[RMDB]
RNA sequence: GGGAACGACUCGAGUAGAGUCGAAAAACAUUACCAGAUUCAGAAGUUGAUAUAGAACUUAUGAAUCGUGACUUGGGUGAGUUUGAAACAAAUUCUUUUAGCAUCCACUUAAGGAGACAAGCACAAUUGUGCAAAUUGGCUUUACAAGCUAAAUUCAACUCGUACGUUAAUUCGUUAACGUACGAGUAAAAGAAACAACAACAACAAC
Reactivity to 2A3 in 0.01 (KOAc 150mM, MgCl2 10mM, bicine 150mM(pH8.5), 24C), signal-to-noise 4, nucleotides 027 to 156: a000c020a030u090u110a050c030c030a030g010a010u000u000c010a010g010a050a010g030u020u070g110a120u090a090u090a300g170a070a010c000u060u030a020u050g000a010a010u010c010g010u030g050a080c050u040u080g030g010g000u080g010a080g020u050u140u170g140a100a090a030c040a040a100a090u090u110c040u050u080u030u010a020g000c010a020u000c000c020a020c020u110u050a040a020g030g000a030g060a010c050a030a040g030c020a010c010a200a300u200u160g030u030g030c000a010a010a110u050u030g000g020c000u070u040u110a050c090a090a010g000c010u050a020a040a120u100u040c010a010
Reactivity to DMS in 0.01 (KOAc 150mM, MgCl2 10mM, bicine 150mM(pH8.5), 24C), signal-to-noise 3, nucleotides 027 to 156: a060c050a100u000u000a090c010c020a300g010a040u000u000c000a010g000a040a020g040u000u010g010a280u000a230u010a140g020a050a010c000u010u000a080u000g000a030a020u000c000g000u010g030a050c030u000u000g000g010g030u010g000a080g000u010u010u000g020a190a090a110c080a060a050a150u000u000c050u010u000u000u000a070g030c040a110u000c030c060a090c130u000u010a040a110g020g000a080g000a080c050a010a140g020c000a040c040a100a130u000u010g030u000g010c020a030a050a180u000u000g020g020c030u010u000u000a060c160a060a130g000c010u000a030a050a120u000u000c080a150